Structure probing data (2A3 and DMS) for a 207-nucleotide construct. For DMS the reverse transcriptase was MarathonRT. 2A3 is a SHAPE reagent: it acylates the 2'-hydroxyl of flexible nucleotides of all four kinds. The reactions ran in a buffer of 150 mM KOAc, 10 mM MgCl2 and 150 mM bicine (pH 8.5), at 24 C. Reactivities are rounded to 0.1 and cut off at 0 and 3. Values cover nucleotides 27 to 156. The 2A3 profile rests on 3,580 reads.
[RMDB]
RNA sequence: GGGAACGACUCGAGUAGAGUCGAAAACGCUGGGUACAGUUGCUUCCCUGUAUUGUCAGCGCCAGAGCUACUGAAGCGCGCACGGUAGCUCUGGCGCUUGGAUUUAUACAGCAGCACUGUACCUGUGCUGAAGCGCGCACGGCAACCGAAAGGUGCGGCUUACUUUACAGUUCGCUGUAAAGUAAGCAAAAGAAACAACAACAACAAC
Reactivity to 2A3 in 0.01 (KOAc 150mM, MgCl2 10mM, bicine 150mM(pH8.5), 24C), signal-to-noise 3, nucleotides 027 to 156: c040g000c010u030g000g000g000u010a000c000a000g030u230u110g110c010u090u090c030c020c000u010g020u000a030u020u170g150u110c040a010g000c010g000c000c000a010g000a000g010c000u000a000c000u030g040a250a050g060c070g000c030g000c070a010c010g000g000u010a010g000c000u000c000u010g000g020c000g010c000u000u040g000g000a000u000u060u010a020u000a020c020a000g060c070a000g000c010a020c000u000g000u010a010c000c000u000g000u020g000c010u060g020a150a050g010c030g000c000g010c020a030c000g060g000c020a070a090c030c010g080a090a040a030g040g010u010g010c010g000
Reactivity to DMS in 0.01 (KOAc 150mM, MgCl2 10mM, bicine 150mM(pH8.5), 24C), signal-to-noise 1, nucleotides 027 to 156: c050g010c000u000g000g000g000u010a030c010a030g040u010u020g010c010u010u000c130c100c030u010g010u000a010u000u010g000u000c070a130g050c000g010c030c010a050g010a090g020c000u000a040c010u000g000a070a060g010c050g030c000g000c020a300c000g030g010u000a000g020c000u000c020u000g000g000c010g010c000u020u000g040g020a120u000u000u000a040u030a000c020a070g020c110a040g000c000a090c020u000g020u020a010c010c040u000g010u010g000c000u000g000a090a060g000c030g030c060g050c020a300c000g020g030c030a060a200c020c020g010a120a130a200g000g020u000g000c040g000